[RMDB]
RNA sequence: GGGAACGACUCGAGUAGAGUCGAAAAGCGUACUACGAAGAGGUUGGGUUGUCGAUAAGACGGUUCCCAAAUAGGAACCGUCUUUUGACGACAUCCAACUCCCCACCUUCGUAUCGCAAAACUGUCAGACGCGUUCUUCGGAACGCGUCUGACAGAACUAAUGACAUCGAUUCGUCGAUGUCAUUAGAAAAGAAACAACAACAACAAC
Reactivity to DMS in 0.01 (KOAc 150mM, MgCl2 10mM, bicine 150mM(pH8.5), 24C), signal-to-noise 1, nucleotides 027 to 156: g040c040g010u010a080c100u000a010c020g000a020a030g010a300g030g010u000u000g040g010g020u000u000g010u000c010g060a130u010a000a030g030a020c000g000g000u010u010c010c010c030a010a200a190u010a090g050g010a000a030c020c000g000u000c000u010u000u000u010g010a140c110g010a010c000a020u000c000c010a030a010c000u020c100c070c060c060a300c140c010u020u000c000g030u010a030u020c080g040c070a110a120a090a130c010u010g010u020c000a020g040a010c000g020c000g020u000u000c000u000u000c300g030g020a020a020c010g010c020g010u000c020u000g020a020c000a000g010a020a110
Reactivity to 2A3 in 0.01 (KOAc 150mM, MgCl2 10mM, bicine 150mM(pH8.5), 24C), signal-to-noise 2, nucleotides 027 to 156: g020c020g050u120a100c040u000a030c020g000a010a000g000a010g030g010u000u000g010g020g030u100u150g000u000c020g020a060u010a110a000g010a010c000g030g000u010u020c020c020c020a110a140a120u230a070g010g000a010a000c010c030g000u000c030u020u010u010u050g050a030c000g000a000c000a010u010c000c000a000a010c000u020c000c010c000c010a020c000c000u000u000c000g010u010a040u300c020g000c010a040a000a000a130c010u010g000u000c000a000g000a010c000g000c000g020u010u020c040u060u100c300g040g000a000a000c000g010c000g000u000c000u010g000a010c000a000g000a000a000
Record summary: This 207-nucleotide RNA was probed chemically with DMS and 2A3. It was measured as part of the RMDB library RNAMAK. For DMS, 2,332 sequencing reads were counted. Conditions: 150 mM KOAc, 10 mM MgCl2 and 150 mM bicine (pH 8.5), 24 C.